[RMDB]
RNA sequence: GGGAACGACUCGAGUAGAGUCGAAAAGGGGUCCCAUGGAGUAACGAAGAACAUUUGGGAGUUCUGAAGCCUCCACGGAACGAGGAUCAAAUGGGAGUUACGCCAGUGAAAUACAUGGGACGGAGGCACCCAAAACGCAUCACUUCGGUGAUGCGAACCUCCCUUUAAUGUUCGCAUUAAAGGGAGGAAAAGAAACAACAACAACAAC
Reactivity to 2A3 in 0.01 (KOAc 150mM, MgCl2 10mM, bicine 150mM(pH8.5), 24C), signal-to-noise 5, nucleotides 027 to 156: g030g000g010g000u010c000c000c000a020u010g000g010a030g000u010a000a020c020g080a300a050g000a020a000c000a000u000u000u000g010g000g000a020g000u000u010c010u020g010a050a020g010c010c000u010c000c020a050c040g000g030a010a010c000g030a220g030g010a010u010c000a000a000a000u010g000g000g000a020g020u010u000a010c010g030c020c000a070g020u070g250a120a130a030u300a070c130a110u130g000g000g020a000c040g000g000a010g000g000c000a020c000c000c000a020a080a010a020c010g000c000a000u000c000a000c010u050u110c260g080g000u000g000a000u000g000c000g000a000a010
Reactivity to DMS in 0.01 (KOAc 150mM, MgCl2 10mM, bicine 150mM(pH8.5), 24C), signal-to-noise 2, nucleotides 027 to 156: g010g010g050g030u000c010c000c000a130u000g000g010a020g010u000a000a020c010g010a170a140g020a150a290c010a060u000u000u000g010g000g010a070g020u000u000c000u010g020a040a270g010c020c000u010c010c000a250c030g010g000a030a040c020g000a090g040g020a030u000c030a000a030a040u000g000g010g000a090g010u010u000a030c020g020c000c000a040g020u030g000a130a130a160u000a210c120a170u000g000g000g020a150c000g000g020a060g040g050c010a060c000c000c000a040a060a100a150c020g000c010a000u000c000a010c010u000u020c250g020g030u010g000a010u000g020c020g000a030a060
Chemical mapping of a 207-nucleotide RNA with 2A3 and DMS.
The DMS profile rests on 4,255 reads.
Conditions: 150 mM KOAc, 10 mM MgCl2 and 150 mM bicine (pH 8.5), 24 C.
For 2A3 the reverse transcriptase was SuperScript II with manganese.